[RMDB]
RNA sequence: GGGAACGACUCGAGUAGAGUCGAAAAGUGCGUCGGAGACGGCGUGCAACGAGCUGGUUGCGGCUCGGAAGGCGCAGCGUAGGGCGGCGCGCGCGCCAAUAAGCGGGCCUCGUCGCCAUCCGCAGAAAAGCGUUAACAAAAAUAAAAAUGGCCUGCGAACAUCUGCUGGCUUCGGCCAGUGGAUGUUAAAAGAAACAACAACAACAAC
Reactivity to DMS in 0.01 (KOAc 150mM, MgCl2 10mM, bicine 150mM(pH8.5), 24C), signal-to-noise 2, nucleotides 027 to 156: g030u000g030c000g010u000c000g000g020a300g020a300c000g030g000c020g000u000g000c020a070a060c020g010a040g010c020u030g020g020u000u000g040c020g030g020c000u000c000g020g010a050a170g030g020c010g120c000a080g000c010g050u000a070g000g020g000c000g020g020c090g000c210g060c010g020c010g010c000c000a090a120u000a060a090g010c020g020g020g010c000c010u000c090g050u000c030g040c000c000a050u000c090c000g000c010a180g010a110a140a120a160g000c020g030u020u010a040a150c050a000a060a050a130a170u020a040a090a110a190a160u010g010g000c020c000u000g020c030g010
Reactivity to 2A3 in 0.01 (KOAc 150mM, MgCl2 10mM, bicine 150mM(pH8.5), 24C), signal-to-noise 3, nucleotides 027 to 156: g040u020g000c000g000u010c000g030g010a050g010a050c010g000g000c000g000u000g010c000a020a060c020g000a000g010c010u070g100g070u200u190g080c080g030g000c010u000c000g030g020a100a110g000g010c030g000c050a190g000c020g010u030a050g060g010g020c000g000g000c000g000c000g000c000g000c000g020c010c000a030a130u270a120a020g000c000g000g020g000c000c030u030c090g010u000c000g000c000c030a040u080c050c010g000c010a020g300a150a150a040a000g000c040g010u070u120a020a060c080a070a090a060a040a040u260a050a100a040a000a020u040g000g000c000c000u000g000c010g000